[RMDB]
RNA sequence: GGGAACGACUCGAGUAGAGUCGAAAAGAUAUGGAGGGAGUACAACAGCAGCCAUUCGGAAACGAAUGUGCUGACAUGUAUCUCCUAAGUCAAAAGAUGGGCUACUCGUUCGCGAGUAGCCCAUCAAUCGUAAGAAGUUGUUCGCAACUUCUUACGAAAAAGAAACAACAACAACAAC
Reactivity to DMS in 0.01 (KOAc 150mM, MgCl2 10mM, bicine 150mM(pH8.5), 24C), signal-to-noise 3, nucleotides 027 to 126: g000a080u010a160u000g020g000a280g000g010g000a100g030u000a010c000a040a080c170a190g000c000a020g000c020c000a010u000u000c010g000g000a110a090a180c010g010a010a010u000g020u020g020c000u000g010a020c100a080u000g000u000a020u010c000u010c000c000u000a050a060g010u010c030a080a110a110a120g010a020u000g000g010g000c000u000a000c000u000c010g020u010u000c210g010c030g010a010g010u000a000g010c010c000c000a000u000c000a010a070